[RMDB]
An RNA of 177 nucleotides, treated with DMS and 2A3 and read out base by base.
RNA sequence: GGGAACGACUCGAGUAGAGUCGAAAAGAUAUGGAUGUGCUAAUACGGGAGGAGCUAUGAUCGGAAACGAUCAUACUCCGAGGAUCGUAUAACACAUCCUAAGUCAAAAGGUUGGUUCGCCAACCAAGCUUCAACUAUUCUUCGGAAUAGUUGAAGCAAAAGAAACAACAACAACAAC
Reactivity to DMS in 0.01 (KOAc 150mM, MgCl2 10mM, bicine 150mM(pH8.5), 24C), signal-to-noise 2, nucleotides 027 to 126: g010a040u020a300u000g000g000a000u000g000u010g000c020u000a090a090u000a000c010g000g000g010a070g000g020a020g000c300u000a000u000g000a010u000c000g010g010a120a110a250c000g000a030u000c000a010u000a010c020u000c000c010g000a060g000g000a060u000c000g020u010a000u000a010a120c000a010c000a000u010c010c000u000a010a080g000u000c030a060a040a110a080g000g010u000u000g010g010u000u000c270g020c000c010a010a010c020c000a050a020
Reactivity to 2A3 in 0.01 (KOAc 150mM, MgCl2 10mM, bicine 150mM(pH8.5), 24C), signal-to-noise 2, nucleotides 027 to 126: g030a030u040a040u160g010g000a000u010g000u010g060c080u080a150a050u040a040c000g000g040g010a010g000g020a000g000c170u050a000u010g010a010u010c000g030g000a060a040a020c000g000a000u000c000a000u010a000c010u000c030c000g000a030g020g010a000u020c020g030u020a010u030a050a000c020a000c000a000u000c000c000u010a020a000g030u020c040a010a100a090a050g000g010u000u020g020g000u050u100c200g070c070c010a000a010c000c010a010a010

High 2A3 reactivity points to a flexible backbone, as in loops and unpaired stretches. The reactions ran in a buffer of 150 mM KOAc, 10 mM MgCl2 and 150 mM bicine (pH 8.5), at 24 C. For DMS the reverse transcriptase was MarathonRT. The data come from the RNA Mapping Database (RMDB), library TTRDEL.